[RMDB]
RNA sequence: GGGAACGACUCGAGUAGAGUCGAAAAGAUAUGGACGCAUCUAGUGUCAGCGUAGAGAUCGGAAACGAUGUAGCUGACCUAGAGUGCGUCCUAAGUCAAAACUUUGUCAGGUUCGCCUGACAAAGAAGUAUAAUAUAGGCUUCGGCCUAUAUUAUACAAAAGAAACAACAACAACAAC
Reactivity to DMS in 0.01 (KOAc 150mM, MgCl2 10mM, bicine 150mM(pH8.5), 24C), signal-to-noise 9, nucleotides 027 to 126: g000a030u010a300u000g000g010a010c010g020c000a050u000c000u000a010g010u020g010u000c000a010g010c000g000u000a140g020a060g000a030u000c000g000g000a130a100a170c010g010a010u000g000u000a100g020c000u000g000a010c000c000u000a000g000a030g020u010g020c000g010u000c000c000u000a000a080g010u010c030a090a080a110a160c010u000u000u000g000u000c000a000g000g010u000u010c270g010c010c000u000g000a010c000a000a000a000g000a050a080
Reactivity to 2A3 in 0.01 (KOAc 150mM, MgCl2 10mM, bicine 150mM(pH8.5), 24C), signal-to-noise 5, nucleotides 027 to 126: g020a010u070a040u160g000g000a000c000g000c000a020u000c000u000a020g020u030g000u300c000a010g000c020g080u250a120g040a010g020a260u010c010g020g000a030a080a030c020g000a000u040g070u190a030g000c000u000g000a000c000c000u000a000g010a010g000u010g000c000g000u000c000c000u000a000a010g010u000c010a010a010a070a110c000u020u000u010g000u010c010a010g000g050u030u050c130g090c070c000u000g000a000c000a000a000a000g000a030a000

The record gives the reactivity of an RNA of 177 nucleotides to DMS and 2A3. 2A3 is a SHAPE reagent: it acylates the 2'-hydroxyl of flexible nucleotides of all four kinds. Conditions: 150 mM KOAc, 10 mM MgCl2 and 150 mM bicine (pH 8.5), 24 C. It was measured as part of the RMDB library TTRDEL. For DMS the reverse transcriptase was MarathonRT.